Annotation: The record gives the reactivity of an RNA of 177 nucleotides to DMS and 2A3. It was measured as part of the RMDB library OK2TST. The DMS profile rests on 16,269 reads. Conditions: 150 mM KOAc, 10 mM MgCl2 and 150 mM bicine (pH 8.5), 24 C. For 2A3, 22,999 sequencing reads were counted. For 2A3 the reverse transcriptase was SuperScript II with manganese. High DMS reactivity at an A or C suggests that its Watson-Crick edge is free.

RNA sequence: GGGAACGACUCGAGUAGAGUCGAAAACCAUCCAGUGCUUUGGCUGCGUCUCCGGUGCCCAUCUGAAUCCCGCCGUGACCGUGGCCGCCUACAUCUACGAGAUGGUCACCCUGCGCAUGGCAUUUGAGCAGUAUUAUUACUUCGGUAAUAAUACUGCAAAAGAAACAACAACAACAAC
Reactivity to DMS in 0.01 (KOAc 150mM, MgCl2 10mM, bicine 150mM(pH8.5), 24C), signal-to-noise 9, nucleotides 027 to 126: c000c000a140u010c080c060a070g010u000g010c050u010u000u010g020g010c060u000g020c050g010u000c060u000c070c090g000g020u000g020c050c010c020a050u000c070u000g000a120a120u000c020c010c020g010c040c040g020u010g010a050c210c090g020u000g000g020c020c030g010c050c020u010a060c090a080u000c090u010a100c170g000a100g010a020u000g010g000u000c020a070c000c070c060u010g010c060g010c040a050u000g010g000c040a100u000u000u010g000a300
Reactivity to 2A3 in 0.01 (KOAc 150mM, MgCl2 10mM, bicine 150mM(pH8.5), 24C), signal-to-noise 9, nucleotides 027 to 126: c000c000a010u040c030c030a050g030u030g100c040u150u190u220g110g000c040u060g010c030g050u010c030u020c090c010g000g030u040g030c010c010c010a050u040c050u070g100a080a070u050c010c020c010g000c000c020g060u060g040a060c020c030g010u020g000g010c010c000g000c010c000u060a080c020a110u070c030u100a060c110g060a020g000a160u010g000g020u010c010a050c010c010c020u060g010c070g000c040a070u060g050g000c030a060u090u070u110g060a050